Source information
Structure probing data (DMS and 2A3) for a 177-nucleotide construct. For 2A3, 5,013 sequencing reads were counted. For 2A3 the reverse transcriptase was SuperScript II with manganese. High 2A3 reactivity points to a flexible backbone, as in loops and unpaired stretches. Conditions: 150 mM KOAc, 10 mM MgCl2 and 150 mM bicine (pH 8.5), 24 C.
[RMDB]
RNA sequence: GGGAACGACUCGAGUAGAGUCGAAAAGUGUCUGACAAGGCUGCAGCCCUCAAAAAGCGGCAAUGCGUCUUUGCGGAGCUGAUGUCCACGGAGGAGGCAUAUGUACAGGAUCUGCAUGAGAUCGUCAACACACUUUAGGUUUCGACCUAAAGUGUGUAAAAGAAACAACAACAACAAC
Reactivity to DMS in 0.01 (KOAc 150mM, MgCl2 10mM, bicine 150mM(pH8.5), 24C), signal-to-noise 7, nucleotides 027 to 126: g010u000g010u010c010u000g010a090c090a060a070g000g020c020u000g040c020a090g010c020c010c010u030c130a050a100a080a120a060g020c160g010g020c030a070a070u010g010c020g000u000c030u000u000u010g010c070g010g010a290g010c020u000g000a080u000g010u000c010c030a070c120g010g010a100g010g000a080g000g010c040a040u000a060u010g020u000a100c120a090g010g010a020u000c030u000g010c080a090u010g000a050g000a060u000c030g010u000c080a100
Reactivity to 2A3 in 0.01 (KOAc 150mM, MgCl2 10mM, bicine 150mM(pH8.5), 24C), signal-to-noise 4, nucleotides 027 to 126: g020u040g110u050c010u020g040a100c030a030a070g040g030c030u080g010c040a210g300c000c040c000u080c070a180a200a030a010a010g060c120g020g000c010a030a070u120g000c010g050u040c020u030u050u110g000c020g010g000a030g030c020u040g030a090u090g030u000c020c010a030c060g040g020a070g030g020a010g010g000c040a040u100a030u190g090u030a050c030a060g040g040a040u010c000u020g030c030a100u130g040a020g020a110u040c040g060u040c060a080